[RMDB]
An RNA of 207 nucleotides, treated with DMS and 2A3 and read out base by base. For 2A3, 1,071 sequencing reads were counted. The reactions ran in a buffer of 150 mM KOAc, 10 mM MgCl2 and 150 mM bicine (pH 8.5), at 24 C. For DMS the reverse transcriptase was MarathonRT. Reactivities are given for positions 27 through 156.
RNA sequence: GGGAACGACUCGAGUAGAGUCGAAAAAUUCCGGCACGUCCACGUCGUGCAGAGCGGUAACAUGCGUUACUAGGGGUGCAAGAGCUCUUUUUGAGGAGGAGCUCUUUUUGCUGCACUAGUUGCAUCAGAUGGUAACGCAUGGCUAAGCCGGAAAGGGCUAGGGUUGUUAGUUCGCUAACAACCCUAGAAAAGAAACAACAACAACAAC
Reactivity to DMS in 0.01 (KOAc 150mM, MgCl2 10mM, bicine 150mM(pH8.5), 24C), signal-to-noise 2, nucleotides 027 to 156: a200u000u000c000c020g050g020c020a090c010g040u010c000c110a120c020g000u010c020g000u000g040c090a090g000a150g010c020g020g000u000a050a050c000a060u000g010c040g060u000u000a000c000u000a150g030g010g030g000u020g000c070a060a070g020a030g030c010u000c000u000u020u000u010u000g020a300g030g030a030g000g020a050g040c000u000c000u000u000u020u000u000g010c030u000g010c040a070c060u010a090g020u000u000g010c000a110u000c010a090g020a300u020g000g000u010a010a030c020g010c010a030u000g010g000c050u010a080a140g010c000c010g030g020a010a090a140g010g010g000
Reactivity to 2A3 in 0.01 (KOAc 150mM, MgCl2 10mM, bicine 150mM(pH8.5), 24C), signal-to-noise 1, nucleotides 027 to 156: a000u040u010c000c020g000g010c020a000c030g070u040c100c000a100c130g070u090c050g070u040g000c030a000g030a010g030c000g040g060u100a070a020c000a030u000g000c000g000u000u010a000c000u000a000g000g090g000g050u010g000c000a010a010g000a000g020c000u000c010u010u050u040u130u300g230a140g000g060a020g020g010a000g000c000u000c000u010u010u010u030u050g070c010u000g010c010a000c050u020a010g080u070u020g000c000a010u000c000a010g150a300u170g040g000u000a000a000c000g000c000a000u000g000g000c020u050a060a030g000c010c000g000g000a030a010a010g020g040g030